The record gives the reactivity of an RNA of 177 nucleotides to DMS and 2A3.

[RMDB]
RNA sequence: GGGAACGACUCGAGUAGAGUCGAAAAGUGGCAUACUUCGGUAUGCCACAAACCAGACCCUAUCUGGAACACCCUCUACUGCGUGAUCCCAAGUAGAUCCCAAAAGUCGUGGGUUCGCCCACGACAACACGAGAGCUAUGUUCGCAUAGCUCUCGUGAAAAGAAACAACAACAACAAC
Reactivity to DMS in 0.01 (KOAc 150mM, MgCl2 10mM, bicine 150mM(pH8.5), 24C), signal-to-noise 1, nucleotides 027 to 126: g000u000g000g070c000a000u000a000c000u010u010c190g010g080u000a000u000g020c000c000a010c000a010a050a110c010c040a000g000a070c160c080c160u050a230u000c010u010g000g000a180a170c090a060c040c050c000u010c000u000a030c020u020g010c080g000u000g010a110u000c010c000c030a120a070g010u000a060g000a120u000c000c010c020a140a070a100a080g030u000c000g060u000g000g000g010u000u040c280g040c000c000c010a000c010g000a010c010a030a110
Reactivity to 2A3 in 0.01 (KOAc 150mM, MgCl2 10mM, bicine 150mM(pH8.5), 24C), signal-to-noise 2, nucleotides 027 to 126: g000u010g010g000c010a020u010a000c000u020u020c230g050g000u000a010u000g020c010c000a010c000a000a010a010c010c000a010g030a010c060c020c020u070a100u070c000u030g030g010a040a040c030a040c040c000c000u010c010u040a050c010u020g090c010g060u050g040a110u060c040c000c010a000a010g040u060a030g040a100u060c020c010c020a070a170a020a070g030u000c000g000u000g000g010g040u010u030c180g060c010c000c000a020c010g000a010c000a000a020

Values are in units of 0.01, from 0 to 300, in steps of 10.
The RNA was probed in 150 mM KOAc, 10 mM MgCl2 and 150 mM bicine (pH 8.5) at 24 C.
2A3 is a SHAPE reagent: it acylates the 2'-hydroxyl of flexible nucleotides of all four kinds.